[RMDB]
RNA sequence: GGGAACGACUCGAGUAGAGUCGAAAACGGCCACGGUCUCGACCACCGCACGAGUGAUUUGUGGUUUCUCCAAUUGCGAAGUAUCACGCCCAACAAUCCAUGACAGCUUUUCGCGACUUUGCGCCAGCCUUAGCACCGCAUUCGUGCGGUGCUAAGGAAAAGAAACAACAACAACAAC
Reactivity to 2A3 in 0.01 (KOAc 150mM, MgCl2 10mM, bicine 150mM(pH8.5), 24C), signal-to-noise 1, nucleotides 027 to 126: c050g050g000c000c000a010c030g030g060u000c020u070c080g110a070c000c060a040c000c040g080c010a030c010g020a010g110u080g110a170u070u110u250g050u070g070g000u010u000u020c050u000c020c020a010a110u060u120g050c040g030a130a010g050u070a040u120c010a020c060g050c030c010c000a030a070c040a010a040u020c040c030a020u110g000a000c020a020g060c000u000u080u050u120c020g000c020g100a100c020u070u050u070g000c020g000c020c000a020g030
Reactivity to DMS in 0.01 (KOAc 150mM, MgCl2 10mM, bicine 150mM(pH8.5), 24C), signal-to-noise 2, nucleotides 027 to 126: c160g000g000c010c050a050c070g020g060u010c020u000c030g010a080c130c090a050c070c090g030c050a070c070g000a060g010u000g000a090u000u010u000g030u000g010g010u000u000u000c070u000c010c040a080a070u000u010g010c070g020a070a070g020u000a040u000c040a070c060g020c000c010c010a100a100c100a040a080u010c050c060a070u010g000a060c120a050g010c040u000u000u000u000c050g020c040g000a050c090u000u000u000g000c060g010c050c050a130g000
Chemical mapping of a 177-nucleotide RNA with 2A3 and DMS.
For 2A3, 1,611 sequencing reads were counted.
The RNA was probed in 150 mM KOAc, 10 mM MgCl2 and 150 mM bicine (pH 8.5) at 24 C.